RNA sequence: GGGAACGACUCGAGUAGAGUCGAAAAUAGUGCAGGUGGGCGGACGUGCCGGGAAAGAUGACGUACAGCAUGUGGCCCCCGUAAGUGGGGUCCGGGUAAAACAACAGCCGCGGGUCGCACGCCCCGCAUCUCCAAGCAGCUUCGGCUGCUUGGAGAUAAAAGAAACAACAACAACAAC
Reactivity to 2A3 in 0.01 (KOAc 150mM, MgCl2 10mM, bicine 150mM(pH8.5), 24C), signal-to-noise 1, nucleotides 027 to 126: u140a000g170u000g000c000a000g100g000u150g010g020g020c010g120g050a100c070g170u150g080c000c070g070g000g000a000a120a000g090a120u170g000a030c000g100u270a000c200a000g020c050a110u000g070u070g020g000c110c000c000c000c000g200u180a000a070g000u140g100g000g000g020u050c000c010g000g000g030u160a220a250a000a000c020a060a060c000a020g050c000c000g300c050g000g100g000u020c020g000c000a000c000g000c070c070c000c000g230c020